[RMDB]
RNA sequence: GGGAACGACUCGAGUAGAGUCGAAAACGUCGUGAACUAGCGACAAUGCCGUAGAUCCAUCGUUAUCUAACCGAAACAUCGUGACUAGUCGUAGAAUAGAACCAGGAGUGGGCGCUGUCAAACAAAGACGGGGUCUCAGAUUCGUCUGAGGCCCCGUAAAAGAAACAACAACAACAAC
Reactivity to DMS in 0.01 (KOAc 150mM, MgCl2 10mM, bicine 150mM(pH8.5), 24C), signal-to-noise 1, nucleotides 027 to 126: c050g010u000c020g000u000g000a030a080c060u000a220g060c000g000a000c090a200a020u000g020c020c000g030u070a030g070a070u040c000c020a050u020c090g000u000u000a030u020c060u040a060a170c110c040g000a090a010a030c100a030u020c010g050u050g010a000c040u000a100g020u070c020g000u110a020g000a190a110u000a070g000a100a130c090c000a040g000g050a020g040u000g000g000g000c010g000c040u010g120u000c000a000a090a110c160a110a070a010g000